Record summary:
This 177-nucleotide RNA was probed chemically with DMS.
RNA sequence: GGGAACGACUCGAGUAGAGUCGAAAAUGUCCUGAGCGAUGCUCCCAGCAGUCCUGGGAGAUGGAACGGUCCUUAUUCGGCUCACAGGAAGGACCGCCUUAACUGGACAGACACAGCAAGGUGCUAAUACCCCAGCACUGUUCGCAGUGCUGGGGUAAAAAGAAACAACAACAACAAC
Reactivity to DMS in 0.01 (KOAc 150mM, MgCl2 10mM, bicine 150mM(pH8.5), 24C), signal-to-noise 1, nucleotides 027 to 126: u000g020u000c010c000u000g000a050g070c090g030a100u000g000c020u000c000c000c010a010g030c120a250g030u000c220c000u000g040g010g000a020g000a020u020g000g000a130a220c090g000g000u000c000c000u020u000a180u010u000c090g030g010c000u010c120a140c280a160g050g010a110a030g000g050a000c000c000g000c090c020u000u000a090a080c040u000g020g010a170c050a080g010a230c070a020c020a050g000c130a090a110g030g000u010g000c110u000a090a160